[RMDB]
RNA sequence: GGGAACGACUCGAGUAGAGUCGAAAACUUCUCGUGCAGAUCCUGGCAGAGCGGAUACAGCUGAGUGACUGCUACCGAGGAGUGGUGUUUGAUGGCCUCGACACUCUCUUUGCUCAGAAUGCUGCAGGCCGCAUCUCACGUUCGCGUGAGAUGCGGCAAAAGAAACAACAACAACAAC
Reactivity to 2A3 in 0.01 (KOAc 150mM, MgCl2 10mM, bicine 150mM(pH8.5), 24C), signal-to-noise 1, nucleotides 027 to 126: c000u000u000c010u020c040g070u020g020c000a020g050a170u060c010c000u030g090g000c000a010g020a040g060c160g050g100a090u100a090c070a060g020c000u160g140a070g090u200g050a090c020u100g020c090u190a100c000c060g040a020g090g040a030g010u090g100g020u000g000u060u140u200g140a150u180g010g030c000c010u000c000g000a020c040a000c020u030c000u020c000u100u140u130g070c100u100c090a000g000a020a000u040g100c040u060g000c010a020g170
This 177-nucleotide RNA was probed chemically with 2A3. The data come from the RNA Mapping Database (RMDB), library OK2TST. For 2A3 the reverse transcriptase was SuperScript II with manganese. The 2A3 profile rests on 622 reads. The RNA was probed in 150 mM KOAc, 10 mM MgCl2 and 150 mM bicine (pH 8.5) at 24 C.